[RMDB]
RNA sequence: GGGAACGACUCGAGUAGAGUCGAAAAGGUCACGCAGAUGAGGUCGCGGGCCUGAGAUUCGAUCUCGUCGUAGCGGCGGGCUUGGGUGAGCACUGGUUCGUUGUCGAAGUUGUCGAGCAGUUCGGGCACGCGGAUGAUCCAGUACUUAUCUUCGCGCAGACUAUAGAUUGUUCGCAAUCUAUAGUCUAAAAGAAACAACAACAACAAC
Reactivity to DMS in 0.01 (KOAc 150mM, MgCl2 10mM, bicine 150mM(pH8.5), 24C), signal-to-noise 4, nucleotides 027 to 156: g020g020u000c020a070c020g040c020a120g000a070u000g000a090g010g030u000c030g030c040g010g010g000c020c030u020g000a110g010a090u000u000c020g000a070u010c010u000c000g030u000c020g010u000a130g030c040g020g020c040g010g000g000c020u010u000g000g020g020u000g010a080g030c040a060c030u030g010g010u000u000c030g040u000u000g000u010c010g000a080a240g010u000u010g020u000c000g000a150g010c120a190g010u010u010c020g020g010g010c020a050c030g000c030g000g000a060u000g010a060u010c030c020a090g020u000a030c030u000u000a050u000c020u000u000c040g020c040g000c140
Reactivity to 2A3 in 0.01 (KOAc 150mM, MgCl2 10mM, bicine 150mM(pH8.5), 24C), signal-to-noise 9, nucleotides 027 to 156: g040g010u070c060a080c230g010c050a050g030a100u090g050a060g090g090u080c030g000c010g010g030g000c010c000u010g010a040g000a020u040u050c020g030a120u060c010u000c010g010u010c010g010u040a040g050c030g050g010c030g010g020g020c040u060u100g030g020g030u090g040a030g000c030a020c060u040g030g010u040u020c020g000u010u040g140u140c020g040a100a050g040u130u060g050u030c020g010a020g020c110a060g070u120u080c000g010g010g010c030a010c020g010c010g010g010a020u060g020a020u050c020c010a030g020u030a040c010u030u020a010u020c000u040u060c050g020c030g000c070